[RMDB]
Source information
The record gives the reactivity of an RNA of 207 nucleotides to 2A3 and DMS. For DMS, 6,574 sequencing reads were counted. Values cover nucleotides 27 to 156. For DMS the reverse transcriptase was MarathonRT. The RNA was probed in 150 mM KOAc, 10 mM MgCl2 and 150 mM bicine (pH 8.5) at 24 C.
RNA sequence: GGGAACGACUCGAGUAGAGUCGAAAACGCUGGGCUCAUAAGGUGUGCACAGGGAGAUAACUGAAGCGCGCACGGUUAUCUUUGAUCUGUGCCACCUCCGCCUGUGCUGAAGCGCGCACGGCAACCGAAAGGUGCGAUUUGGGGCUUCGGCCCCAAAAUGUAGGAUUAUCUUCGGAUAAUCCUACAUAAAAGAAACAACAACAACAAC
Reactivity to 2A3 in 0.01 (KOAc 150mM, MgCl2 10mM, bicine 150mM(pH8.5), 24C), signal-to-noise 5, nucleotides 027 to 156: c030g000c010u030g000g000g000c020u040c140a270u260a300a100g000g000u020g100u210g000c000a000c000a010g010g000g000a000g000a000u000a000a000c000u020g040a140a060g020c010g000c000g000c000a000c000g000g000u000u000a000u020c000u300u210u000g000a010u000c000u020g000u020g000c010c010a010c010c000u020c000c030g000c000c000u020g010u020g000c000u020g010a130a050g000c000g000c000g000c010a000c000g020g000c020a010a030c010c010g050a060a040a040g020g000u020g010c010g010a010u060u040u070g000g000g000g000c000u060u070c280g120g000c020c000c010c070a010a010a000
Reactivity to DMS in 0.01 (KOAc 150mM, MgCl2 10mM, bicine 150mM(pH8.5), 24C), signal-to-noise 2, nucleotides 027 to 156: c030g030c030u000g010g030g030c020u010c150a130u000a040a060g040g030u000g020u000g010c000a020c000a050g030g020g010a040g000a060u010a010a050c020u010g010a030a080g010c020g070c060g020c020a300c040g010g010u000u000a010u000c030u000u000u020g010a020u010c000u000g010u000g020c010c000a010c010c000u000c050c100g000c000c020u000g010u010g000c000u000g000a050a030g020c040g040c010g010c000a300c040g000g010c010a070a070c000c030g000a100a090a100g020g030u000g010c010g000a220u010u000u000g010g000g020g010c000u000u000c090g020g000c010c010c010c000a000a000a030